Structure probing data (DMS and 2A3) for a 177-nucleotide construct. It was measured as part of the RMDB library OK2TRN. The DMS profile rests on 8,258 reads.

[RMDB]
RNA sequence: GGGAACGACUCGAGUAGAGUCGAAAAAUGCGAGCUAUGCAGCAAGAGUGGAGUUUAGUUGCAGCAUCAUUGAAACUGAUGCAUAACGUGUAUCGUACGUUAAUUAGUUCUUAUUAGGUGACGAUACCCGACUUAAAUACUUCGGUAUUUAAGUCGGAAAAGAAACAACAACAACAAC
Reactivity to DMS in 0.01 (KOAc 150mM, MgCl2 10mM, bicine 150mM(pH8.5), 24C), signal-to-noise 6, nucleotides 027 to 126: a080u010g000c170g000a040g000c010u010a050u010g000c020a040g010c030a050a060g020a060g020u000g020g000a130g010u000u000u000a110g020u000u000g020c090a080g010c000a010u000c010a030u010u010g020a120a100a140c300u000g010a030u000g000c010a130u010a030a050c080g020u000g010u000a020u000c030g000u000a050c010g010u000u000a020a030u000u000a050g010u000u000c090u010u010a090u000u000a050g020g010u010g000a020c010g000a020u000a020c050
Reactivity to 2A3 in 0.01 (KOAc 150mM, MgCl2 10mM, bicine 150mM(pH8.5), 24C), signal-to-noise 5, nucleotides 027 to 126: a000u110g010c040g000a030g020c030u060a010u110g030c020a020g010c010a070a040g050a020g070u100g060g100a120g020u070u100u120a020g020u030u060g050c020a010g010c010a010u020c010a010u030u170g100a090a050a030c050u020g010a010u010g000c020a010u050a050a020c030g000u030g000u030a020u030c020g000u030a080c010g020u040u000a050a030u030u040a020g080u110u060c040u080u070a080u040u080a060g080g040u140g080a020c000g000a000u010a010c000
Values cover nucleotides 27 to 126.